RNA sequence: GGGAACGACUCGAGUAGAGUCGAAAAGAAAGCUUCUCAUAACUUCGGUCCCUCUGGGAUGGACUGAUUGUGCUUCAUGUGUAUAUGGCAAUGCUGGCGACAUACAGUACAGACAAGGCUGAUGGUCCGUAUUACCCAGAUUCGUCUGGGUAAUACGAAAAGAAACAACAACAACAAC
Reactivity to DMS in 0.01 (KOAc 150mM, MgCl2 10mM, bicine 150mM(pH8.5), 24C), signal-to-noise 7, nucleotides 027 to 126: g010a110a110a110g000c070u000u000c030u000c050a100u010a090a110c080u000u000c030g020g010u000c010c010c050u010c120u010g020g020g010a070u000g010g010a040c040u010g010a110u000u000g010u000g000c030u000u000c040a050u010g020u010g020u000a080u000a090u000g010g010c050a050a070u000g000c060u000g000g000c050g020a080c070a070u000a070c050a040g000u010a040c060a070g010a060c120a050a090g000g010c030u000g000a090u000g010g010u010c090
Reactivity to 2A3 in 0.01 (KOAc 150mM, MgCl2 10mM, bicine 150mM(pH8.5), 24C), signal-to-noise 7, nucleotides 027 to 126: g110a030a090a010g040c040u070u000c020u010c030a110u110a180a070c020u050u030c030g040g020u050c020c060c020u060c070u140g150g000g040a060u040g030g010a030c010u020g030a090u050u100g040u040g020c010u030u040c060a050u080g040u010g030u090a030u030a080u300g110g000c040a090a070u080g020c040u040g070g010c030g030a020c010a020u150a050c020a010g020u030a060c010a020g070a040c020a070a050g030g000c000u030g020a060u060g060g020u010c020
Chemical mapping of a 177-nucleotide RNA with DMS and 2A3.
For DMS, 10,745 sequencing reads were counted.
Source: RMDB library OK2TRN, as collected in RNAgym.
For 2A3 the reverse transcriptase was SuperScript II with manganese.
The RNA was probed in 150 mM KOAc, 10 mM MgCl2 and 150 mM bicine (pH 8.5) at 24 C.
Reactivities are given for positions 27 through 126.